[RMDB]
RNA sequence: GGGAACGACUCGAGUAGAGUCGAAAAAGUGACUGAGUACAAGGCCUCUGUGGACAUGCCUGCGCUUGACAUUAGGAAGAAGAUGGAAGAAACGGAAGUGAUGUACAAUGCACUUUCAGAGUUAUCGCGUCCGAUAGGAUUUCGAUCCUAUCGGACGAAAAGAAACAACAACAACAAC
Reactivity to DMS in 0.01 (KOAc 150mM, MgCl2 10mM, bicine 150mM(pH8.5), 24C), signal-to-noise 3, nucleotides 027 to 126: a100g000u000g020a100c050u000g000a300g000u000a060c050a060a090g000g000c020c010u030c040u000g030u010g020g000a130c240a050u020g000c050c000u010g000c100g020c030u030u030g050a100c110a070u010u000a080g000g010a130a030g020a090a040g010a120u020g010g020a140a050g000a080a110a120c060g010g010a020a000g060u010g010a020u000g030u000a030c150a020a110u060g020c000a000c000u000u000u000c050a090g010a170g000u000u000a120u000c060g000
Reactivity to 2A3 in 0.01 (KOAc 150mM, MgCl2 10mM, bicine 150mM(pH8.5), 24C), signal-to-noise 3, nucleotides 027 to 126: a000g020u000g030a200c070u040g030a010g020u040a010c000a090a050g090g010c000c040u000c000u000g030u020g020g030a020c020a090u100g020c040c000u030g000c040g010c030u090u070g040a080c030a180u080u210a080g040g050a060a040g010a020a050g040a020u080g020g040a070a010g000a050a160a030c040g010g020a020a030g000u050g020a080u060g040u040a090c060a030a080u280g020c010a010c000u000u020u040c060a010g030a010g060u060u050a070u110c040g000